[RMDB]
RNA sequence: GGGAACGACUCGAGUAGAGUCGAAAAGAAGAGAGGAAGAUUUAGGGGAAGAAGAUAACAAUAUUCACGCGGUCUUCCAUGUUACGUGUGUAGACACGAUGAUUGUUAUCAAAACUAAAUAUGAGAACACUGGAUAGCCAUUCGUGGCUAUCCAGUGAAAAGAAACAACAACAACAAC
Reactivity to DMS in 0.01 (KOAc 150mM, MgCl2 10mM, bicine 150mM(pH8.5), 24C), signal-to-noise 3, nucleotides 027 to 126: g000a060a030g010a090g000a080g000g010a090a060g020a050u010u000u020a050g030g010g000g040a100a070g010a110a120g000a020u000a000a030c000a010a020u050a080u060u040c070a080c110g020c090g030g000u010c010u020u000c050c000a010u020g020u090u030a090c180g000u000g000u050g020u000a030g030a020c010a080c010g000a260u000g000a010u000u000g000u000u000a020u000c010a040a040a090a050c100u010a020a050a020u030a040u040g000a110g020a110a110
Reactivity to 2A3 in 0.01 (KOAc 150mM, MgCl2 10mM, bicine 150mM(pH8.5), 24C), signal-to-noise 4, nucleotides 027 to 126: g130a020a010g080a020g000a000g080g030a030a060g010a090u040u050u100a020g020g040g060g030a000a060g040a030a040g010a080u030a010a010c000a000a000u060a130u150u140c010a020c060g130c110g040g000u010c010u040u000c000c000a020u060g070u090u190a130c200g020u030g010u030g030u050a000g020a010c030a020c140g000a020u020g010a010u000u000g010u020u010a010u020c000a050a030a000a060c040u090a040a060a040u230a080u180g050a050g060a080a000